[RMDB]
Source: RMDB library OK2TRN, as collected in RNAgym. The record gives the reactivity of an RNA of 177 nucleotides to 2A3 and DMS. The 2A3 profile rests on 1,989 reads. The RNA was probed in 150 mM KOAc, 10 mM MgCl2 and 150 mM bicine (pH 8.5) at 24 C.
RNA sequence: GGGAACGACUCGAGUAGAGUCGAAAAAGGAGAUGGUGGGGUACUACUAUGCACUAGUUCUGGAGUUAAGGUAAGUCCACCUUUGCAGAAUUACAACUCAGGUGGGAAUAGCCUAACACAACAUCACCGGUAAUAGCUCAUUCGUGAGCUAUUACCGAAAAGAAACAACAACAACAAC
Reactivity to 2A3 in 0.01 (KOAc 150mM, MgCl2 10mM, bicine 150mM(pH8.5), 24C), signal-to-noise 2, nucleotides 027 to 126: a000g040g000a060g000a030u090g010g060u060g020g000g020g000u030a000c010u010a010c000u040a080u180g060c080a040c050u010a020g030u120u040c020u100g070g060a210g050u020u040a120a060g030g020u010a020a040g050u000c010c000a000c000c040u030u040u100g000c020a000g010a130a110u210u100a110c040a060a020c050u000c010a000g000g000u000g020g030g000a030a140u070a030g020c010c000u000a040a000c050a000c020a060a050c010a060u080c000a000c050
Reactivity to DMS in 0.01 (KOAc 150mM, MgCl2 10mM, bicine 150mM(pH8.5), 24C), signal-to-noise 3, nucleotides 027 to 126: a130g010g020a110g000a080u010g020g030u000g000g000g000g030u000a090c080u000a040c080u010a090u010g020c140a110c190u000a040g010u000u000c040u010g010g030a150g000u000u000a050a060g000g000u000a080a140g030u000c010c020a000c010c000u010u010u010g020c200a040g000a070a030u010u010a100c160a190a070c020u010c030a020g030g020u000g010g010g000a040a030u010a180g020c010c010u000a040a070c050a040c070a050a030c050a080u000c140a080c160